An RNA of 177 nucleotides, treated with 2A3 and DMS and read out base by base. As a SHAPE reagent, 2A3 marks flexible, mostly unpaired nucleotides at the ribose 2'-OH. The data come from the RNA Mapping Database (RMDB), library OK1LIB. 2A3 adducts were read by reverse transcription with SuperScript II with manganese. The RNA was probed in 150 mM KOAc, 10 mM MgCl2 and 150 mM bicine (pH 8.5) at 24 C.

RNA sequence: GGGAACGACUCGAGUAGAGUCGAAAAGAAAUUGGUGAAGCUGUUGCUAGACGUUUUAAUUUACCGGGUGUUCGUCAAGGCUAUGGUGCAACAGAAACAACCUCUGCAAUUAUUAUCACACCGGAAGUCUAAGGGUGUACUUCGGUACACCCUUAGAAAAAGAAACAACAACAACAAC
Reactivity to 2A3 in 0.01 (KOAc 150mM, MgCl2 10mM, bicine 150mM(pH8.5), 24C), signal-to-noise 3, nucleotides 027 to 126: g070a010a110a060u200u130g080g000u070g020a050a000g010c050u010g010u130u030g040c060u080a110g000a030c020g020u010u090u150u240a160a180u220u140u040a050c000c000g000g020g010u010g000u000u140c090g040u060c020a010a070g130g000c050u150a050u170g000g020u050g020c010a020a090c000a050g110a050a070a000c010a000a150c010c000u050c010u010g000c000a000a190u090u000a060u110u070a080u270c010a040c080a090c000c000g020g030a110a000g070
Reactivity to DMS in 0.01 (KOAc 150mM, MgCl2 10mM, bicine 150mM(pH8.5), 24C), signal-to-noise 3, nucleotides 027 to 126: g000a100a100a030u000u030g010g000u020g020a140a100g030c050u010g010u010u010g010c040u010a090g010a100c200g010u000u000u000u010a040a140u040u000u030a050c000c000g000g000g030u010g000u010u040c040g000u000c030a070a050g020g000c050u010a040u010g000g060u050g010c040a050a030c060a080g020a040a030a100c120a020a070c190c020u020c080u000g010c030a080a080u020u060a070u000u040a050u080c130a050c050a120c010c000g000g030a100a090g010